[RMDB]
RNA sequence: GGGAACGACUCGAGUAGAGUCGAAAAGAUAUGGACUCCAGUCCACUACCCACCAGACGUCUCGGAAACGAGACAGUCUGAGGUGGGCAUAUAUGGAGUCCUAAGUCAAAGUGUACUUCGGUACACACCUGAGAUAUAGCUUCGGCUAUAUCUCAGGAAAAGAAACAACAACAACAAC
Reactivity to DMS in 0.01 (KOAc 150mM, MgCl2 10mM, bicine 150mM(pH8.5), 24C), signal-to-noise 3, nucleotides 027 to 126: g000a030u010a300u000g000g020a010c000u000c010c000a160g040u000c080c110a070c100u000a090c030c010c010a300c100c010a050g000a000c020g000u010c000u000c000g020g000a150a090a180c000g010a000g000a010c000a000g010u000c000u000g000a060g000g020u000g000g010g010c040a060u000a080u000a300u010g010g000a030g020u010c000c000u030a000a060g000u000c050a130a100a160g020u000g000u000a020c000u000u040c170g060g000u000a010c000a000c000a120
Reactivity to 2A3 in 0.01 (KOAc 150mM, MgCl2 10mM, bicine 150mM(pH8.5), 24C), signal-to-noise 2, nucleotides 027 to 126: g050a040u090a080u200g020g000a000c000u040c020c020a030g010u040c000c030a020c000u090a070c030c050c030a030c000c010a000g000a010c000g000u000c000u010c020g050g000a100a070a060c010g000a010g000a010c010a010g000u000c010u020g060a050g060g000u010g000g060g030c030a130u300a020u080a050u220g000g010a010g000u000c010c000u050a160a020g030u020c060a200a060a060g000u010g020u000a010c020u070u130c300g100g020u000a000c020a000c000a010